[RMDB]
RNA sequence: GGGAACGACUCGAGUAGAGUCGAAAAGAUCAGCUAGAAUGGCGCAUUGUAAAUUCAGUUUCAGAAUCAGAUCUGUGCAUGAGUUAUUGCAAGAAUUGAAGAUAUCAUUGAUACAACGAGAAACAAACGCAUAGGUAGUCUUCGGACUACCUAUGCGAAAAGAAACAACAACAACAAC
Reactivity to DMS in 0.01 (KOAc 150mM, MgCl2 10mM, bicine 150mM(pH8.5), 24C), signal-to-noise 1, nucleotides 027 to 126: g020a100u000c030a150g000c020u010a050g000a100a150u010g040g010c060g050c070a070u000u000g020u020a050a050a070u000u000c030a030g020u000u000u010c030a100g040a110a180u050c100a100g000a040u000c010u000g010u000g020c000a000u030g010a170g000u020u000a040u000u000g030c020a020a050g090a010a020u000u000g000a030a110g000a140u000a070u000c020a070u000u040g040a070u000a020c040a090a020c100g020a170g000a060a110a070c050a020a060a060
Structure probing data (DMS) for a 177-nucleotide construct. Conditions: 150 mM KOAc, 10 mM MgCl2 and 150 mM bicine (pH 8.5), 24 C.